[RMDB]
RNA sequence: GGGAACGACUCGAGUAGAGUCGAAAACUUCUUCUGUGGUCCCGCCUCUCCUGGUCGGUGAACCCCCUGGCUUUGGAUUUCCUCCCAGGUGUAGAAUCAAUCUCCAUGUCCUCUCGCCUGGGCCUCUACCCGGCUCUCUUCGGAGAGCCGAAAAGAAACAACAACAACAAC
Reactivity to 2A3 in 0.01 (KOAc 150mM, MgCl2 10mM, bicine 150mM(pH8.5), 24C), signal-to-noise 3, nucleotides 027 to 129: c030u050u040c030u060u030c060u080g130u080g080g000u030c000c030c020g010c000c020u070c000u020c010c010u020g000g030u050c050g030g010u040g070a050a050c000c010c010c000c040u020g020g010c000u060u000u050g040g030a110u050u040u060c020c010u020c000c000c000a000g000g010u030g010u100a020g020a040a020u000c040a020a100u040c080u000c070c030a070u110g030u000c000c030u000c000u000c000g000c000c000u000g010g000g000c000c000u010c010u020a060c020c040
Reactivity to DMS in 0.01 (KOAc 150mM, MgCl2 10mM, bicine 150mM(pH8.5), 24C), signal-to-noise 3, nucleotides 027 to 129: c110u000u050c090u000u040c070u000g080u000g040g000u020c120c040c030g070c060c060u050c010u000c000c000u030g030g000u020c070g000g000u030g050a140a180c160c060c010c020c080u050g000g080c070u050u050u030g040g020a190u030u030u000c020c010u020c030c000c000a000g010g030u020g000u130a000g020a040a000u010c050a050a090u020c140u050c160c050a130u000g010u040c160c020u010c020u020c080g000c050c020u080g010g010g090c060c030u040c030u000a040c120c070